RNA sequence: GGGAACGACUCGAGUAGAGUCGAAAAUGUGAGGGAACUCGGCCAAAUAGUCCCGUAUCUUAGGUAGAAGGGAUGCCUAUCCAGAAAUAGGAUAGGUCGCAGUGGCAAGGGGACCCCGACUGUUUACCACCAUAUGUCUGUUCGCAGACAUAUGGUGAAAAGAAACAACAACAACAAC
Reactivity to DMS in 0.01 (KOAc 150mM, MgCl2 10mM, bicine 150mM(pH8.5), 24C), signal-to-noise 2, nucleotides 027 to 126: u000g010u000g000a150g000g010g000a070a300c000u010c020g000g000c000c000a050a080a120u000a060g010u000c010c010c000g010u010a070u000c010u030u000a080g040g040u010a020g010a100a140g020g000g010a050u000g000c000c000u000a000u000c000c010a060g010a110a090a130u000a060g000g000a050u000a010g000g010u000c170g000c230a130g000u000g010g010c040a020a070g010g010g000g010a290c000c000c010c010g000a030c090u000g000u000u020u000a120c120
Reactivity to 2A3 in 0.01 (KOAc 150mM, MgCl2 10mM, bicine 150mM(pH8.5), 24C), signal-to-noise 2, nucleotides 027 to 126: u140g020u030g040a140g020g000g000a010a000c000u010c020g000g020c000c010a010a010a090u160a030g060u030c010c020c010g010u090a130u070c030u050u110a120g150g010u060a040g090a200a090g000g010g000a000u020g020c000c000u000a010u010c000c020a020g170a080a180a080u240a110g010g000a010u000a000g000g000u020c010g000c010a070g120u040g030g000c060a130a180g010g010g000g020a030c010c010c000c010g030a040c050u020g100u080u090u020a050c040
The record gives the reactivity of an RNA of 177 nucleotides to DMS and 2A3. For 2A3 the reverse transcriptase was SuperScript II with manganese. High DMS reactivity at an A or C suggests that its Watson-Crick edge is free.